Conditions: 150 mM KOAc, 10 mM MgCl2 and 150 mM bicine (pH 8.5), 24 C. Structure probing data (DMS and 2A3) for a 177-nucleotide construct. Values cover nucleotides 27 to 126. The data come from the RNA Mapping Database (RMDB), library OK1LIB.

RNA sequence: GGGAACGACUCGAGUAGAGUCGAAAAGAAAGAAAAAGAAAUCAUCAAAUGAGGUCAAAUGUCAGAAUUUCGGGCGUAAAUACGACAUUAUGCAGAAAGCCGACCUCGAUGUCGUUUAGAAAGAAAACACCGCUGCUAUAUUCGUAUAGCAGCGGUGAAAAGAAACAACAACAACAAC
Reactivity to DMS in 0.01 (KOAc 150mM, MgCl2 10mM, bicine 150mM(pH8.5), 24C), signal-to-noise 1, nucleotides 027 to 126: g020a060a070a190g000a000a030a050a040a090g010a050a060a050u010c050a000u000c040a100a110a080u050g030a010g000g010u040c000a160a000a000u010g000u050c040a040g030a040a060u000u000u000c020g000g000g000c060g010u000a040a010a000u000a100c190g000a030c070a030u000u000a020u020g000c000a260g000a120a030a040g000c140c150g000a030c080c000u000c000g000a020u010g090u040c060g030u000u000u000a020g000a230a070a000g000a080a150a000a110
Reactivity to 2A3 in 0.01 (KOAc 150mM, MgCl2 10mM, bicine 150mM(pH8.5), 24C), signal-to-noise 2, nucleotides 027 to 126: g070a000a020a030g150a040a040a030a000a000g100a050a080a050u070c020a010u060c020a010a070a260u180g020a000g020g040u030c020a000a060a040u040g060u020c000a000g130a070a110u040u020u060c050g040g100g010c060g060u140a050a050a000u120a070c010g000a000c000a010u030u010a060u120g080c060a070g120a160a030a000g040c060c050g010a020c000c000u010c000g000a000u040g050u090c030g000u000u000u020a060g020a080a280a000g030a010a100a020a000